[RMDB]
RNA sequence: GGGAACGACUCGAGUAGAGUCGAAAAUGUUCUUCAGCGUCUGCGACUAAUGCAUCGGCUUCUUCACGGGACUGCGUCACAUUACGAUGAGCUUCCUCGUUAGCCUCAUCAAUUGUUGUGCGUGCGCCGCCUUACAGAAAUUCGUUUCUGUAAGGCGAAAAGAAACAACAACAACAAC
Reactivity to DMS in 0.01 (KOAc 150mM, MgCl2 10mM, bicine 150mM(pH8.5), 24C), signal-to-noise 3, nucleotides 027 to 126: u030g020u000u000c000u000u010c070a070g030c070g010u000c050u010g020c040g000a090c050u010a090a090u010g000c100a080u000c090g020g000c020u000u000c040u000u000c060a090c080g020g000g000a090c090u020g000c040g020u000c050a020c050a060u000u000a090c180g010a050u000g000a080g000c050u010u000c050c080u000c130g010u000u010a050g020c110c020u000c030a010u000c030a070a120u000u000g000u000u010g010u010g000c120g010u000g010c050g030c060
Reactivity to 2A3 in 0.01 (KOAc 150mM, MgCl2 10mM, bicine 150mM(pH8.5), 24C), signal-to-noise 3, nucleotides 027 to 126: u080g000u030u000c010u080u060c020a020g030c010g070u040c030u060g020c010g030a040c040u120a100a090u090g010c020a030u020c020g040g010c000u070u000c010u060u060c040a030c050g030g020g040a070c050u060g030c010g070u060c000a020c010a070u020u300a070c110g060a050u020g000a000g000c010u060u020c010c070u080c040g050u050u050a000g010c010c010u040c020a030u000c000a020a110u060u070g050u020u030g030u010g040c030g010u020g000c040g030c000